RNA sequence: GGGAACGACUCGAGUAGAGUCGAAAAAACCGGAGGAGCCUGCGGUUUAAUUGGACUCAACGCCGGACAUCUCACCAGCAUCGACAGCAGGAGUGACGAUCAGGUUGAUGACCUUAUCAGACCUGCUAGCCGUAACUCCUUUCGAGGAGUUACGGCUAAAAGAAACAACAACAACAAC
Reactivity to 2A3 in 0.01 (KOAc 150mM, MgCl2 10mM, bicine 150mM(pH8.5), 24C), signal-to-noise 1, nucleotides 027 to 126: a000a030c000c000g020g000a030g010g070a080g040c000c000u070g070c000g120g000u000u030u020a040a050u140u170g060g100a110c030u030c030a010a010c030g040c000c000g000g000a030c040a100u040c050u060c010a150c070c050a000g080c000a000u120c080g140a150c040a050g000c000a000g000g090a040g040u070g160a030c130g000a000u000c000a000g000g000u080u060g140a090u150g040a030c000c000u000u000a000u010c120a000g160a060c040c000u000g090c000u040
This 177-nucleotide RNA was probed chemically with 2A3. Values are in units of 0.01, from 0 to 300, in steps of 10. Source: RMDB library RFM100, as collected in RNAgym. The reactions ran in a buffer of 150 mM KOAc, 10 mM MgCl2 and 150 mM bicine (pH 8.5), at 24 C. For 2A3 the reverse transcriptase was SuperScript II with manganese. Values cover nucleotides 27 to 126.